[RMDB]
RNA sequence: GGGAACGACUCGAGUAGAGUCGAAAAACUGAGUACUUGCCCUUUGACCCAUUAGAUUUUACAGGGAUAUUAGCAGUGAAAGAUGAAUUGUAUGCUCAUCAGCAUGCCCUAAAUGGUAGAAAAUGUCUAUUUGUUAGAUAGAGAUGAGGGAGAGAAAAAUAGCAGCUGUAUUCGUACAGCUGCUAUUAAAAGAAACAACAACAACAAC
Reactivity to DMS in 0.01 (KOAc 150mM, MgCl2 10mM, bicine 150mM(pH8.5), 24C), signal-to-noise 2, nucleotides 027 to 156: a080c030u020g030a130g000u000a090c060u000u000g010c000c010c040u000u000u030g020a240c130c010c020a120u010u010a170g020a160u010u000u010u000a110c110a070g010g010g020a120u000a100u000u010a060g030c020a150g020u010g010a070a100a120g020a150u000g010a050a120u000u000g020u010a100u000g000c050u000c060a080u000c060a140g040c010a060u000g030c000c030c010u000a030a050a090u010g030g000u000a070g010a060a070a090a110u000g010u000c000u000a080u010u000u000g010u000u000a030g010a070u000a070g000a160g000a090u000g010a050g030g020g050a130g020a110g020a040a050a070
Reactivity to 2A3 in 0.01 (KOAc 150mM, MgCl2 10mM, bicine 150mM(pH8.5), 24C), signal-to-noise 2, nucleotides 027 to 156: a040c050u020g070a000g080u040a050c040u080u100g070c020c000c000u090u020u000g010a000c000c000c000a030u040u130a090g090a200u070u110u000u080a100c080a030g020g010g010a000u000a050u060u120a050g000c020a010g050u030g230a040a030a090g060a020u110g020a050a110u090u100g010u130a060u160g010c010u020c050a090u020c000a000g040c070a050u050g000c000c000c040u060a130a120a070u060g030g000u040a030g090a000a100a020a030u060g010u010c020u010a080u040u050u050g110u060u050a010g010a050u020a000g050a000g000a020u020g010a010g010g050g000a030g000a040g000a020a170a010